[RMDB]
RNA sequence: GGGAACGACUCGAGUAGAGUCGAAAAUACACUUUACGUGUGCUGGUUUCAUUAGUUUGUCCCAAACCAGGCACGCGUAAUUAAAGGCCAGUUUGGCCAGGUCCGCGUUAUCGAUGGUCACCAAUAAUUCUGAGCUAGUAUUCGUACUAGCUCAGAAAAAAGAAACAACAACAACAAC
Reactivity to DMS in 0.01 (KOAc 150mM, MgCl2 10mM, bicine 150mM(pH8.5), 24C), signal-to-noise 3, nucleotides 027 to 126: u010a100c120a140c080u000u000u000a010c010g010u000g000u010g010c020u000g000g000u000u000u000c120a110u000u010a110g020u000u010u000g000u000c040c040c030a030a040a010c000c010a050g000g000c010a000c000g010c000g010u010a000a010u000u010a060a100a080g010g010c010c000a130g010u010u000u010g030g030c010c010a050g020g000u000c030c040g010c060g000u000u000a050u010c050g010a070u010g020g000u000c050a100c060c060a070a080u020a090a120
Reactivity to 2A3 in 0.01 (KOAc 150mM, MgCl2 10mM, bicine 150mM(pH8.5), 24C), signal-to-noise 1, nucleotides 027 to 126: u110a000c050a060c110u070u020u010a000c010g000u000g010u000g000c000u000g000g000u000u030u100c060a070u070u110a060g240u080u140u140g110u070c000c000c040a010a010a000c020c000a040g070g070c000a000c000g000c000g000u000a000a000u020u050a100a050a020g010g000c000c000a070g070u100u200u240g050g000c000c010a010g010g010u000c000c020g010c000g020u050u070a100u120c060g070a070u060g040g010u040c030a010c040c030a040a040u140a050a060